This 177-nucleotide RNA was probed chemically with DMS.
Conditions: 150 mM KOAc, 10 mM MgCl2 and 150 mM bicine (pH 8.5), 24 C.
Reactivities are given for positions 27 through 126.
For DMS the reverse transcriptase was MarathonRT.
Source: RMDB library TTRINS, as collected in RNAgym.
RNA sequence: GGGAACGACUCGAGUAGAGUCGAAAAGAUAUGGAAACUCUUAUGAUCGCAGUCCAUGGAGACCGAGGUUCGGAAACGAACCGAGGUCUAUGAAGUGGACUGCGAUCAUAAGAGGUUUCCUAAGUCACAAUUAGCCAUUGUUCGCAAUGGCUAAUUGAAAAGAAACAACAACAACAAC
Reactivity to DMS in 0.01 (KOAc 150mM, MgCl2 10mM, bicine 150mM(pH8.5), 24C), signal-to-noise 2, nucleotides 027 to 126: g010a060u020a300u010g010g000a040a010a020c000u000c000u000u000a020u020g010a020u000c010g030c010a040g000u030c000c000a010u000g030g020a010g010a010c000c000g010a300g000g000u000u000c000g010g000a120a100a280c000g000a000a000c010c030g020a300g010g000u000c000u000a020u010g000a120a240g000u010g040g010a010c000u000g000c000g000a000u000c010a000u010a000a010g000a020g000g010u000u010u000c000c000u000a020a140g010u000c040a220